RNA sequence: GGGAACGACUCGAGUAGAGUCGAAAAUACUGUGCCACCUGGUGGAUAGCUCGGCUCGGAUGCCGACGAAGGACGUGCCAAGCUGCGAUAAGCCUGAGGGAGCCGCACGGAGGCUAAGAACUCAGGACAGGAAUAGAAUGUUCGCAUUCUAUUCCUGAAAAGAAACAACAACAACAAC
Reactivity to 2A3 in 0.01 (KOAc 150mM, MgCl2 10mM, bicine 150mM(pH8.5), 24C), signal-to-noise 2, nucleotides 027 to 126: u080a020c010u030g020u060g070c000c000a040c030c110u090g070g020u040g010g080a100u100a060g020c030u010c000g020g000c010u030c110g200g050a100u190g070c000c000g000a050c020g030a080a040g030g010a020c030g000u020g000c000c000a040a020g010c020u030g000c020g070a090u030a170a050g040c000c000u020g000a000g030g010g000a000g000c020c020g020c020a030c050g130g050a040g020g000c000u030a100a050g010a070a020c000u010c000a010g020g030a020
Reactivity to DMS in 0.01 (KOAc 150mM, MgCl2 10mM, bicine 150mM(pH8.5), 24C), signal-to-noise 3, nucleotides 027 to 126: u000a070c080u010g000u000g000c030c010a090c050c060u010g000g040u000g000g000a150u000a060g000c070u000c010g000g030c000u020c100g010g000a110u000g020c030c030g000a050c120g010a190a120g010g010a110c040g010u000g000c010c030a080a050g010c060u010g010c100g010a100u000a080a110g000c010c010u010g000a050g000g000g000a040g020c000c040g000c080a050c090g000g000a210g000g010c030u000a090a160g010a130a170c020u000c010a020g000g000a200